[RMDB]
The record gives the reactivity of an RNA of 207 nucleotides to 2A3.
The RNA was probed in 150 mM KOAc, 10 mM MgCl2 and 150 mM bicine (pH 8.5) at 24 C.
Source: RMDB library OK3TST, as collected in RNAgym.
RNA sequence: GGGAACGACUCGAGUAGAGUCGAAAAACUAAUUUUCUGAACUGUCAACGUGGGACUCAGUCUGACCACAUUGAAGUGCACGGUAAGAACUUCUUCACUGCCAUUUUGAUACUUCAAUCUUACUCUGUAAACUCCACUGUCAUUGAAACGGGCCCGCAUUAGCCCAACGAUUCGUCGUUGGGCUAAUAAAAGAAACAACAACAACAAC
Reactivity to 2A3 in 0.01 (KOAc 150mM, MgCl2 10mM, bicine 150mM(pH8.5), 24C), signal-to-noise 1, nucleotides 027 to 156: a000c120u240a180a210u050u040u020u040c100u090g120a000a070c010u030g030u160c050a050a050c100g000u050g010g010g100a090c040u010c200a040g080u000c020u120g080a130c070c000a060c040a070u010u000g000a040a010g000u010g020c080a030c090g000g040u150a150a040g040a100a070c060u150u070c000u020u130c010a010c070u020g030c000c020a110u190u260u110u110g040a080u040a090c010u010u020c030a030a030u000c000u050u070a020c060u050c000u000g060u090a050a110a000c000u000c040c000a000c000u000g010u090c050a020u070u060g040a010a080a070c040g000g060g000c000c070c000g000c040